Annotation: Structure probing data (2A3 and DMS) for a 207-nucleotide construct.
RNA sequence: GGGAACGACUCGAGUAGAGUCGAAAAUGUACCGGAUACACUCCUUGCGCAUCUCAUUCAGGAACAGGUGAACAUCAUAUUCGGGAGACGUUUUGGGACCAAUACCCCAAUUUUCGGCGUACAACCCAUUUGCGACAAGUGGAUUUGAUAUUUUGUCCCAUCGCUGUAAAUUCGUUUACAGCGAUGGAAAAGAAACAACAACAACAAC
Reactivity to 2A3 in 0.01 (KOAc 150mM, MgCl2 10mM, bicine 150mM(pH8.5), 24C), signal-to-noise 5, nucleotides 027 to 156: u150g010u040a040c010c030g050g020a040u050a070c070a010c070u060c010c000u030u080g020c040g000c040a110u020c020u040c060a160u290u150c080a080g050g050a110a100c050a040g060g020u060g040a060a050c020a060u090c020a020u040a100u150u090c030g030g000g000a050g020a040c020g000u050u000u060u080g020g000g020a050c070c000a080a040u150a180c010c010c000c010a010a020u050u040u070u140c030g040g000c050g010u050a060c040a070a130c040c020c020a030u080u070u090g070c070g040a070c050a070a020g020u040g020g060a080u030u040u120g060a020u080a100u140u130u110u080g050u040c010
Reactivity to DMS in 0.01 (KOAc 150mM, MgCl2 10mM, bicine 150mM(pH8.5), 24C), signal-to-noise 2, nucleotides 027 to 156: u000g030u010a130c000c020g000g000a300u000a050c080a100c060u010c000c030u010u010g010c040g010c030a080u000c010u000c040a210u000u010c060a130g030g000a090a080c090a040g000g030u000g030a020a080c080a090u010c090a080u000a090u000u010c050g000g000g000a190g000a060c040g000u000u010u010u000g010g020g010a160c090c020a070a240u000a300c100c000c010c010a030a090u000u000u000u010c040g010g030c070g060u000a120c110a030a130c030c000c010a060u000u020u000g010c060g030a110c080a050a120g040u010g020g000a160u000u000u020g020a130u000a220u000u000u010u000g020u010c040
Source information
High 2A3 reactivity points to a flexible backbone, as in loops and unpaired stretches. The 2A3 profile rests on 2,762 reads. For 2A3 the reverse transcriptase was SuperScript II with manganese. The data come from the RNA Mapping Database (RMDB), library OK3TST. The DMS profile rests on 3,039 reads.